[RMDB]
RNA sequence: GGGAACGACUCGAGUAGAGUCGAAAAGUCGGAUUCGUCCGACAAUACUCCUAAGUCAAGAAAUUUGCCGUAAGGGAGACGUAUCGGAAACGAUACGUCUUUGAUCUUACGGAACUACAAGAUUCUUGAUAUGGACGACCAAGUCAUUCGUGACUAAGCCUGUAGCUUAUUUCGAUAAGCUACAGGCAAAAGAAACAACAACAACAAC
Reactivity to DMS in 0.01 (KOAc 150mM, MgCl2 10mM, bicine 150mM(pH8.5), 24C), signal-to-noise 1, nucleotides 027 to 156: g000u000c000g010g010a010u020u000c300g010u010c010c050g010a030c000a040a050u000a070c030u000c000c000u000a080a170g000u000c000a010a010g060a060a030a180u000u000u000g040c010c000g000u020a020a000g000g010g000a000g010a000c000g020u000a000u020c020g010g070a270a100a250c000g020a060u030a000c000g060u000c000u000u000u000g010a050u000c000u000u000a000c000g000g040a010a030c060u000a300c120a060a070g020a170u000u000c000u000u010g000a020u000a300u000g020g000a020c030g010a160c010c000a050a300g000u000c080a110u010u000c260g000u000g020a230c050u000a090a300
Reactivity to 2A3 in 0.01 (KOAc 150mM, MgCl2 10mM, bicine 150mM(pH8.5), 24C), signal-to-noise 2, nucleotides 027 to 156: g010u000c000g000g030a020u030u090c280g070u090c080c000g010a000c010a000a000u060a020c000u030c000c020u060a150a000g010u000c010a000a020g010a010a050a060u080u040u020g010c000c030g010u000a000a000g010g000g000a010g000a000c010g000u000a000u000c000g050g000a130a020a070c000g010a000u000a000c000g010u000c010u010u000u000g000a010u020c000u000u000a000c000g000g010a000a010c030u140a030c020a040a030g030a280u030u000c000u020u010g020a010u020a020u120g030g000a010c070g000a030c060c050a060a030g000u000c010a020u100u090c150g210u110g050a000c030u130a100a100